RNA sequence: GGGAACGACUCGAGUAGAGUCGAAAAACAGGCAGUACGCUGACUGAGGGAAACGGGAGCCGGGCUUGGGACAAGAGCCAUCCCAAGUCCAAGGCCAAGUAGGCUCUAGUGAUGGUACGCCAUCACAAAAACUGGUCUACCUUCGGGUAGACCAGAACUACUCCCUACUCUUCGGAGUAGGGAGUAGAAAAGAAACAACAACAACAAC
Reactivity to 2A3 in 0.01 (KOAc 150mM, MgCl2 10mM, bicine 150mM(pH8.5), 24C), signal-to-noise 2, nucleotides 027 to 156: a000c020a010g040g000c010a010g010u110a050c080g020c050u020g030a070c020u030g020a100g000g020g010a030a090a090c070g040g000g030a040g060c060c000g000g000g000c000u000u000g020g000g000a010c050a130a080g010a000g010c010c000a000u000c010c000c000a000a000g000u000c000c000a060a040g040g000c050c000a110a010g050u100a060g130g000c010u020c000u020a040g000u000g000a000u000g020g000u040a050c230g020c020c000a000u020c000a000c030a010a000a000a020a020c000u000g000g000u010c000u010a000c000c000u030u060c220g090g000g000u000a010g000a000c000c000a000g000a000a000

This 207-nucleotide RNA was probed chemically with 2A3. For 2A3, 1,758 sequencing reads were counted. The RNA was probed in 150 mM KOAc, 10 mM MgCl2 and 150 mM bicine (pH 8.5) at 24 C.